[RMDB]
RNA sequence: GGGAACGACUCGAGUAGAGUCGAAAAGGCGAUAGAGAGGCCCUCUCAUUAAUGCGGAGAUGUCACGCUGACAGAAUGAUAUUAGAUGUCCGCUUCCGGUUCCAUCGCGGCGAUGAUUACAUAGGACAUCGAUUACCCAUUAGCUUCGGGGAAGCAAGAUAUACGCUCGAUUCGUCGAGCGUAUAUCAAAAGAAACAACAACAACAAC
Reactivity to 2A3 in 0.01 (KOAc 150mM, MgCl2 10mM, bicine 150mM(pH8.5), 24C), signal-to-noise 4, nucleotides 027 to 156: g040g000c050g050a030u170a100g090a040g010a040g020g080c000c050c000u020c030u000c010a100u060u220a120a030u150g040c030g020g010a060g010a020u060g010u050c030a010c050g000c080u080g010a040c020a070g150a080a070u080g060a060u050a040u140u140a060g030a050u030g030u000c000c010g010c000u080u040c060c010g000g010u080u030c030c010a050u080c070g020c050g140g040c070g020a030u030g010a020u100u100a070c060a080u150a100g010g040a000c000a000u000c010g000a000u030u080a050c000c000c020a020u050u100a020g040c000u040u040c050g030g000g010g020a000a010g040c030a040a000
Reactivity to DMS in 0.01 (KOAc 150mM, MgCl2 10mM, bicine 150mM(pH8.5), 24C), signal-to-noise 2, nucleotides 027 to 156: g030g040c020g020a180u020a080g040a150g000a130g030g050c030c020c040u010c040u020c020a220u020u000a090a140u010g020c040g000g000a160g010a120u010g030u010c030a050c050g040c070u000g040a170c120a130g010a150a060u000g030a080u000a010u000u010a090g030a020u000g020u000c000c010g030c100u000u000c080c050g080g010u000u010c070c050a080u010c040g070c020g000g000c050g000a080u000g000a100u000u000a020c060a160u000a140g050g030a040c010a020u000c080g050a120u000u000a140c010c020c010a140u000u000a110g040c090u000u000c120g010g000g000g030a070a100g000c030a080a190